An RNA of 177 nucleotides, treated with DMS and read out base by base. It was measured as part of the RMDB library TTRDEL. The reactions ran in a buffer of 150 mM KOAc, 10 mM MgCl2 and 150 mM bicine (pH 8.5), at 24 C. Values cover nucleotides 27 to 126.
RNA sequence: GGGAACGACUCGAGUAGAGUCGAAAAGAUAUGGAUCAGGAGGGAGGGUUUCCUUCGGAAACGAAGGUUACCCAUCGAUCUCCUGAGUCCUAAGUCAAAGUCAGCCUUACUUCGGUAAGGCUGACAACAUUGCUGAAUCCUUCGGGAUUCAGCAAUGAAAAGAAACAACAACAACAAC
Reactivity to DMS in 0.01 (KOAc 150mM, MgCl2 10mM, bicine 150mM(pH8.5), 24C), signal-to-noise 1, nucleotides 027 to 126: g000a000u000a010u020g020g000a020u000c000a030g000g000a000g000g020g020a010g040g020g010u010u000u010c000c000u000u000c000g010g010a020a010a020c010g010a020a000g010g000u000u000a000c010c000c000a120u000c200g000a020u010c000u000c010c000u000g010a060g020u030c000c020u000a000a110g000u000c000a100a080a120g000u000c000a010g010c000c000u000u010a000c000u000u020c260g030g000u010a010a010g000g000c000u000g010a000c010a070a120